[RMDB]
Structure probing data (2A3 and DMS) for a 177-nucleotide construct. The reactions ran in a buffer of 150 mM KOAc, 10 mM MgCl2 and 150 mM bicine (pH 8.5), at 24 C.

RNA sequence: GGGAACGACUCGAGUAGAGUCGAAAAGAUUUACGGCGGGAAAGGUCCCGGGUGCGGCACCUACCGAAACGCGCUGAGGUCCCGGGUGCGGCACCUACCGAAAGGCGCGGAGACCGCCGGAAAGAAAAUGAUUAAAUGGAUUCGUCCAUUUAAUCAUAAAAGAAACAACAACAACAAC
Reactivity to 2A3 in 0.01 (KOAc 150mM, MgCl2 10mM, bicine 150mM(pH8.5), 24C), signal-to-noise 2, nucleotides 027 to 126: g030a020u080u090u130a050c000g010g010c020g000g010g050a130a200a140g090g040u020c000c010c010g000g030g000u040g000c060g110g010c030a000c020c000u030a050c030c000g030a070a100a010c070g020c010g000c110u030g020a020g030g030u080c100c110c010g010g010g000u010g000c000g050g000c000a000c010c000u010a020c030c000g010a050a030a020g060g000c070g000c050g050g020a030g030a030c000c020g000c000c020g000g010a010a060a000g030a010a150a010
Reactivity to DMS in 0.01 (KOAc 150mM, MgCl2 10mM, bicine 150mM(pH8.5), 24C), signal-to-noise 6, nucleotides 027 to 126: g000a160u000u000u000a090c020g010g000c010g010g000g000a090a090a150g010g000u000c040c010c130g000g000g010u000g000c000g010g030c030a010c010c020u010a110c050c030g000a090a100a120c050g010c060g020c040u000g010a230g000g000u000c260c130c080g000g000g020u000g010c000g000g020c030a020c010c010u000a040c040c030g010a090a080a170g000g020c090g000c090g010g010a130g010a140c020c000g000c000c000g010g000a040a040a070g000a100a080a100
For DMS, 6,508 sequencing reads were counted. The data come from the RNA Mapping Database (RMDB), library OK2TRN.